An RNA of 177 nucleotides, treated with 2A3 and DMS and read out base by base. For DMS, 12,970 sequencing reads were counted. 2A3 adducts were read by reverse transcription with SuperScript II with manganese. Source: RMDB library TTRDES, as collected in RNAgym.
RNA sequence: GGGAACGACUCGAGUAGAGUCGAAAAAAAAGAUAUGGAAUGUACAGAGCUCCUAACAGCGAUGAAAUAGAUCGGAAACGAUCUAUGGAGCUGUGAUGGAGCGACGAAGUACAUUCCUAAGUCAAAACAAUCUUAAUAUGUUCGCAUAUUAAGAUUGAAAAGAAACAACAACAACAAC
Reactivity to 2A3 in 0.01 (KOAc 150mM, MgCl2 10mM, bicine 150mM(pH8.5), 24C), signal-to-noise 3, nucleotides 027 to 126: a000a000a010a040g060a030u090a040u110g010g000a010a000u010g000u000a000c010a010g050a020g070c010u010c000c010u020a020a010c000a000g010c000g300a300u050g030a040a000a010u010a010g000a010u000c010g030g010a060a060a050c010g000a000u000c000u010a010u000g000g010a000g000c000u000g000u010g000a130u300g000g000a000g000c000g000a000c000g010a070a020g000u000a000c000a000u000u000c000c000u000a040a000g030u010c030a010a070a060a130
Reactivity to DMS in 0.01 (KOAc 150mM, MgCl2 10mM, bicine 150mM(pH8.5), 24C), signal-to-noise 7, nucleotides 027 to 126: a090a060a090a080g010a030u010a300u000g000g000a020a000u000g000u010a010c000a090g000a230g020c000u000c000c000u000a300a010c000a010g020c000g000a090u020g000a130a090a010u000a010g010a010u010c000g000g000a130a070a180c010g010a010u000c000u000a000u000g000g000a040g020c000u000g010u010g000a160u010g000g000a010g010c000g000a040c200g010a080a080g000u000a000c010a010u000u000c000c000u000a010a080g010u000c020a070a090a100a210